RNA sequence: GGGAACGACUCGAGUAGAGUCGAAAAGCUGUCAGCUUCGGCUGACAGCAAACGCUCAUCUCAUGGAGCGCAAGACGAAUAGCUACUUAUUCGACAUGAGAAAAAGCUGCGCGUUCGCGCGCAGCAACAGCAUCUUAUGGUUCGCCAUAAGAUGCUGAAAAGAAACAACAACAACAAC
Reactivity to DMS in 0.01 (KOAc 150mM, MgCl2 10mM, bicine 150mM(pH8.5), 24C), signal-to-noise 2, nucleotides 027 to 126: g010c000u020g000u010c000a000g000c000u000u020c240g020g000c000u000g000a010c000a000g020c020a000a030a130c010g000c000u000c000a090u010c010u000c030a000u010g000g000a010g000c010g020c100a100a050g040a050c000g030a030a000u000a020g000c230u010a140c120u020u000a020u000u000c000g010a110c010a060u000g000a010g010a020a160a110a120a120g010c000u000g000c020g020c000g010u000u000c260g020c010g000c020g020c000a000g030c000a020a030
Reactivity to 2A3 in 0.01 (KOAc 150mM, MgCl2 10mM, bicine 150mM(pH8.5), 24C), signal-to-noise 2, nucleotides 027 to 126: g010c010u020g000u000c000a000g000c010u060u100c190g090g010c000u000g020a000c000a000g000c020a000a010a010c000g000c000u000c010a060u020c020u000c010a000u010g010g010a000g010c040g010c150a110a010g090a070c010g020a010a010u020a020g050c100u200a100c070u210u050a040u010u040c010g010a010c010a020u010g000a010g000a060a000a000a010a010g000c010u000g000c010g010c000g040u040u100c230g000c000g000c010g040c060a000g000c000a000a000
Conditions: 150 mM KOAc, 10 mM MgCl2 and 150 mM bicine (pH 8.5), 24 C. Chemical mapping of a 177-nucleotide RNA with DMS and 2A3. 2A3 adducts were read by reverse transcription with SuperScript II with manganese. For DMS the reverse transcriptase was MarathonRT. For DMS, 1,381 sequencing reads were counted. It was measured as part of the RMDB library M2PK50. DMS (dimethyl sulfate) methylates the pairing face of unpaired adenines and cytosines. The 2A3 profile rests on 3,304 reads. Values cover nucleotides 27 to 126.